Source: RMDB library M2PK50, as collected in RNAgym. Structure probing data (DMS and 2A3) for a 177-nucleotide construct. For DMS, 966 sequencing reads were counted. Reactivities are given for positions 27 through 126. Values are in units of 0.01, from 0 to 300, in steps of 10. DMS adducts were read by reverse transcription with MarathonRT.

RNA sequence: GGGAACGACUCGAGUAGAGUCGAAAAUAGCUGACGUUCGCGUCAGCUAAAAGCACCAAAACCUCCUGGCGGUGCGGCGCCGGCCCCGCCGGGAAGGCCGCCAACUCGAUGGGUUCGCCCAUCGAAAGUAAGCCAAUGUUUUCGAACAUUGGCUUACAAAAGAAACAACAACAACAAC
Reactivity to DMS in 0.01 (KOAc 150mM, MgCl2 10mM, bicine 150mM(pH8.5), 24C), signal-to-noise 1, nucleotides 027 to 126: u010a010g010c010u020g000a020c020g040u010u010c190g080c020g020u000c000a000g020c000u000a000a010a020a110g000c140a180c050c020a060a040a090a250c060c020u000c020c030u000g010g010c000g000g000u010g010c060g000g010c040g000c060c070g000g000c010c060c060c020g010c010c000g010g020g040a030a010g000g000c110c060g020c060c070a070a140c230u000c010g030a000u000g010g000g000u000u020c250g020c010c000c000a000u000c000g010a010a030a130
Reactivity to 2A3 in 0.01 (KOAc 150mM, MgCl2 10mM, bicine 150mM(pH8.5), 24C), signal-to-noise 1, nucleotides 027 to 126: u050a000g010c010u000g010a010c010g000u010u040c270g000c020g130u020c020a010g000c000u000a000a000a020a000g000c020a120c090c000a000a020a090a190c000c000u020c000c000u010g000g000c000g020g030u040g050c040g060g030c080g050c000c080g050g000c050c020c000c090g020c010c000g020g000g000a000a010g020g000c020c020g050c040c020a060a050c040u030c010g000a000u000g000g020g060u050u030c150g090c030c000c000a010u000c000g000a020a000a000